[RMDB]
RNA sequence: GGGAACGACUCGAGUAGAGUCGAAAACUCUGCCUCUUCGGAGGCAGAGAAACCCAGCACCGAAUCCAAUUAUCGACUCUAGGACGGACCCAAGCAAGGGAAAAACGCCCCAGUUCGCUGGGGCGAACAUACGGUAAUGGUUCGCCAUUACCGUAUGAAAAGAAACAACAACAACAAC
Reactivity to 2A3 in 0.01 (KOAc 150mM, MgCl2 10mM, bicine 150mM(pH8.5), 24C), signal-to-noise 3, nucleotides 027 to 126: c010u000c010u010g000c000c000u020c010u030u040c160g140g010a000g010g010c000a000g000a010g000a000a000a000c020c000c010a010g030c040a020c020c030g060a060a050u020c030c010a040a080u100u040a090u170c020g020a010c020u000c010u050a030g040g040a030c010g010g020a020c000c000c000a020a020g070c040a040a070g020g020g060a040a060a000a040a020c010g010c010c000c000c000a010g010u050u040c090g020c090u020g010g020g000g000c000g000a010a000
Reactivity to DMS in 0.01 (KOAc 150mM, MgCl2 10mM, bicine 150mM(pH8.5), 24C), signal-to-noise 5, nucleotides 027 to 126: c010u000c010u000g010c010c000u000c010u000u010c160g020g010a030g010g000c010a010g010a010g000a010a070a080c020c000c020a100g000c070a050c040c030g000a100a070u010c030c040a070a110u000u010a130u000c000g000a020c000u000c010u000a090g000g000a120c060g010g000a230c010c000c010a130a140g010c120a090a050g010g010g000a040a020a050a100a190c040g000c010c010c000c000a020g010u000u010c180g020c010u000g000g010g020g020c000g000a010a030